[RMDB]
RNA sequence: GGGAACGACUCGAGUAGAGUCGAAAAUGGCAUUUAUAAGGGAGCUCAAAUCGACGAGAUUCCCCUUUAGAAUACCGAGCUGCUCCAAGCCCUUCACGGUUAGCACCAGGAUCAGCGUGUAGCCGUCACUUAUACCUAUUUUCGAAUAGGUAUAAGUAAAAGAAACAACAACAACAAC
Reactivity to DMS in 0.01 (KOAc 150mM, MgCl2 10mM, bicine 150mM(pH8.5), 24C), signal-to-noise 9, nucleotides 027 to 126: u010g010g020c020a030u000u000u000a150u010a050a030g000g000g010a120g010c050u000c030a060a100a150u010c290g010a120c180g000a060g000a070u000u000c090c010c000c020u000u000u000a160g010a030a030u000a030c020c010g010a080g010c030u000g000c060u000c030c030a110a130g010c020c030c040u000u000c130a060c070g010g000u000u000a090g020c050a050c020c040a150g010g010a070u010c130a070g010c090g020u000g010u000a070g010c010c020g000u010c220
Reactivity to 2A3 in 0.01 (KOAc 150mM, MgCl2 10mM, bicine 150mM(pH8.5), 24C), signal-to-noise 9, nucleotides 027 to 126: u080g010g000c020a030u020u040u040a190u070a050a010g020g000g000a020g010c010u010c030a090a140a180u240c130g160a140c090g000a030g010a050u090u120c010c000c000c010u020u030u030a100g020a090a020u020a060c010c020g010a010g010c020u050g010c000u000c030c010a060a060g010c000c000c010u110u150c060a020c040g010g030u040u060a040g040c020a020c030c020a040g130g070a210u160c050a020g040c020g090u020g010u010a010g010c010c000g050u050c010
This 177-nucleotide RNA was probed chemically with DMS and 2A3. The 2A3 profile rests on 44,566 reads.